[RMDB]
RNA sequence: GGGAACGACUCGAGUAGAGUCGAAAAUGCGCGGAUUCGCCAGUCUGAUGCAUGCCGACAAGCCGACGGUGGUCAAGAUCCACGGCUACUGCGUGGCCGGCGGCACCGACAUCGCGCUGCACGCCGAUCCCAAAUAGUAGUUCGCUACUAUUUGGGAAAAAGAAACAACAACAACAAC
Reactivity to DMS in 0.01 (KOAc 150mM, MgCl2 10mM, bicine 150mM(pH8.5), 24C), signal-to-noise 9, nucleotides 027 to 126: u000g010c040g020c010g000g000a150u010u000c130g000c130c080a120g000u000c030u020g030a040u000g010c010a070u010g030c030c010g000a080c080a120a200g010c040c020g010a090c050g000g010u000g010g010u000c040a140a110g010a110u010c160c140a080c130g000g010c010u000a020c040u000g000c070g020u000g010g000c010c030g010g000c030g000g000c010a030c030c040g000a060c040a090u000c060g000c070g010c030u000g000c090a090c110g010c020c030g010a190
Reactivity to 2A3 in 0.01 (KOAc 150mM, MgCl2 10mM, bicine 150mM(pH8.5), 24C), signal-to-noise 8, nucleotides 027 to 126: u090g000c020g000c010g060g040a130u140u110c070g070c100c020a030g020u000c030u070g070a120u030g040c050a060u130g000c010c010g050a070c070a120a020g010c010c000g020a030c010g040g000u010g000g010u020c020a040a040g080a230u090c080c030a040c090g000g020c000u010a020c010u020g130c070g070u060g010g020c010c010g010g000c000g000g000c010a010c010c030g020a030c010a070u070c010g000c010g000c030u030g010c070a040c040g080c010c010g030a090
The data come from the RNA Mapping Database (RMDB), library OK2TST. This 177-nucleotide RNA was probed chemically with DMS and 2A3. For 2A3, 18,741 sequencing reads were counted. The DMS profile rests on 16,602 reads. DMS (dimethyl sulfate) methylates the pairing face of unpaired adenines and cytosines.